[RMDB]
RNA sequence: GGGAACGACUCGAGUAGAGUCGAAAACAACAAAGCCACAAAUAAAAGGCUAACGUCUCACAGAUCGAAAACGAUCUUGGGACGAAAGCCAAGCACCGAAGUGGCAACAAUCGGUGAACAAACAAAAGCCACUACAUCACUUCGGUGAUGUAGUGGCAAAAGAAACAACAACAACAAC
Reactivity to 2A3 in 0.01 (KOAc 150mM, MgCl2 10mM, bicine 150mM(pH8.5), 24C), signal-to-noise 1, nucleotides 027 to 126: c040a000a070c000a000a150a000g030c070c030a060c060a100a120a000u300a000a160a030a000g000g000c000u000a030a020c000g010u000c000u060c000a020c040a030g000a000u000c000g030a130a080a140a300c030g000a000u000c030u010u000g020g000g000a000c000g010a000a000a000g020c000c000a000a000g100c000a000c000c000g020a090a000g020u050g020g060c030a000a000c060a000a170u060c000g000g000u030g000a040a030c080a080a040a000c070a010a080a090a090

Conditions: 150 mM KOAc, 10 mM MgCl2 and 150 mM bicine (pH 8.5), 24 C.
The record gives the reactivity of an RNA of 177 nucleotides to 2A3.
2A3 adducts were read by reverse transcription with SuperScript II with manganese.
Values are in units of 0.01, from 0 to 300, in steps of 10.